[RMDB]
Structure probing data (2A3 and DMS) for a 177-nucleotide construct. Values cover nucleotides 27 to 126. In probing experiments dimethyl sulfate is read out at A N1 and C N3, which are open when not base-paired. DMS adducts were read by reverse transcription with MarathonRT. For 2A3 the reverse transcriptase was SuperScript II with manganese. The RNA was probed in 150 mM KOAc, 10 mM MgCl2 and 150 mM bicine (pH 8.5) at 24 C.

RNA sequence: GGGAACGACUCGAGUAGAGUCGAAAAGUCGUGCUGGCAGUGCUGGUGCGCCCGGCCAGGAUGCUGCCGGCAAUGACCGCGCAUGUGGAGGUGGCAAACCUGUCGCUGACCGGCCGCUGCCGGCUGGCACGGGAGGAAGGUUCGCCUUCCUCCCGUGAAAAGAAACAACAACAACAAC
Reactivity to 2A3 in 0.01 (KOAc 150mM, MgCl2 10mM, bicine 150mM(pH8.5), 24C), signal-to-noise 1, nucleotides 027 to 126: g050u040c030g040u020g050c000u000g010g000c010a020g020u030g120c000u030g010g010u080g060c060g100c040c010c020g000g010c010c020a030g030g050a090u150g020c030u010g000c060c000g000g040c010a000a040u060g000a010c000c010g000c040g000c100a100u120g080u140g130g070a050g020g010u020g010g060c010a000a000a160c000c030u040g070u120c010g000c070u010g040a140c020c000g010g000c000c030g090c070u050g110c030c040g000g010c020u030g020g000
Reactivity to DMS in 0.01 (KOAc 150mM, MgCl2 10mM, bicine 150mM(pH8.5), 24C), signal-to-noise 2, nucleotides 027 to 126: g010u000c010g020u010g000c010u000g000g000c000a010g030u010g020c020u000g000g010u000g020c140g010c040c050c010g010g000c020c030a010g020g000a210u000g010c000u010g000c000c000g000g020c030a030a020u010g010a030c030c080g010c140g010c080a050u010g010u010g010g010a140g010g020u000g000g000c050a020a060a040c030c010u000g000u010c090g020c020u010g010a120c020c000g010g000c020c110g010c200u010g010c070c030g010g000c010u000g010g000